[RMDB]
RNA sequence: GGGAACGACUCGAGUAGAGUCGAAAAAAUUGCUUUCAAACAGGACAUGGCUAUGACUUUGUUCGAAGAAGGCGUGAUUGCCAUUGUGCCAGUUGAAACUGACAUCAAUCCUGAAGUAUCUAUGGCGUUCGAUGUUAAAGAACUUCAGAUCGGCAAGUCCUACAAAUGGCUUCGGCCAUUUGUAGGAAAAAGAAACAACAACAACAAC
Reactivity to 2A3 in 0.01 (KOAc 150mM, MgCl2 10mM, bicine 150mM(pH8.5), 24C), signal-to-noise 2, nucleotides 027 to 156: a000a010u200u090g000c050u050u010u020c080a080a110a040c000a040g000g000a000c000a020u010g000g000c000u250a090u300g030a300c000u080u000u060g020u030u060c020g080a090a070g000a000a000g040g020c000g000u010g070a020u000u050g010c010c010a000u010u000g010u040g030c010c000a070g000u090u130g080a130a120a030c010u030g020a000c010a040u130c070a040a140u090c040c060u020g010a040a000g000u010a180u160c000u010a040u110g040g010c030g080u150u060c080g200a070u180g040u030u010a120a080a000g010a000a000c000u000u000c000a000g000a030u090c000g020g030c060a040a000g000
Reactivity to DMS in 0.01 (KOAc 150mM, MgCl2 10mM, bicine 150mM(pH8.5), 24C), signal-to-noise 1, nucleotides 027 to 156: a090a030u000u010g000c020u040u000u000c020a170a170a120c060a300g040g030a010c050a030u000g020g020c070u060a120u010g020a020c010u000u000u000g040u000u000c010g000a070a240g020a080a030g050g010c000g010u000g010a080u000u000g000c000c000a230u000u010g060u010g000c010c000a050g020u000u000g040a220a210a210c000u020g050a000c010a010u000c090a010a080u000c150c020u000g010a020a020g000u000a140u000c020u040a270u010g050g020c000g000u000u010c160g050a170u010g020u010u010a020a140a090g000a080a060c020u010u000c010a020g010a030u010c010g020g000c020a050a050g010

An RNA of 207 nucleotides, treated with 2A3 and DMS and read out base by base. For 2A3 the reverse transcriptase was SuperScript II with manganese. The RNA was probed in 150 mM KOAc, 10 mM MgCl2 and 150 mM bicine (pH 8.5) at 24 C.